Overview: Structure probing data (DMS and 2A3) for a 207-nucleotide construct. The RNA was probed in 150 mM KOAc, 10 mM MgCl2 and 150 mM bicine (pH 8.5) at 24 C. For 2A3, 3,019 sequencing reads were counted. Values are in units of 0.01, from 0 to 300, in steps of 10. Values cover nucleotides 27 to 156. High 2A3 reactivity points to a flexible backbone, as in loops and unpaired stretches. DMS adducts were read by reverse transcription with MarathonRT.
RNA sequence: GGGAACGACUCGAGUAGAGUCGAAAAAGCAGGACCGCGUUACGACGCGGUACUGCAGCAAUGAGUAGAAGCGGUCAAAUUUGGUGUCGAGUUCCAACAAACCAAAUUCGGGCAUUGCUCACUGCAAAAAACUCUCUUUAGUUCGCUAAAGAGAGAACCUUAUCACUCCGUUCGCGGAGUGAUAAGGAAAAGAAACAACAACAACAAC
Reactivity to DMS in 0.01 (KOAc 150mM, MgCl2 10mM, bicine 150mM(pH8.5), 24C), signal-to-noise 1, nucleotides 027 to 156: a090g020c000a000g000g000a010c000c000g060c010g030u010u000a140c190g030a220c000g070c010g000g000u000a020c000u000g010c000a070g050c010a010a040u000g010a020g010u000a020g020a080a110g010c090g000g030u000c000a050a010a020u000u000u000g030g040u030g030u010c060g020a270g010u000u010c170c050a050a050c000a070a110a050c000c010a010a000a050u000u000c040g020g000g020c040a090u010u000g000c010u000c020a020c040u030g030c040a000a030a020a050a100a120c000u010c000u000c000u000u000u000a010g010u000u000c300g060c010u010a020a000a050g010a020g000a010g000a000a010
Reactivity to 2A3 in 0.01 (KOAc 150mM, MgCl2 10mM, bicine 150mM(pH8.5), 24C), signal-to-noise 3, nucleotides 027 to 156: a000g000c000a000g000g010a010c000c010g000c020g010u020u040a150c300g040a000c000g010c000g000g000u010a000c000u000g000c010a000g000c000a000a030u010g000a010g000u010a030g020a160a010g050c080g030g010u040c020a020a030a000u000u000u010g020g000u020g090u130c100g110a110g090u150u140c060c020a040a040c030a080a130a020c010c000a010a000a010u020u030c040g030g010g000c010a020u020u080g000c000u000c000a000c010u000g000c000a000a000a000a070a080a110c000u000c000u000c000u000u000u010a020g010u040u040c180g020c150u010a000a010a000g010a000g000a000g000a010a000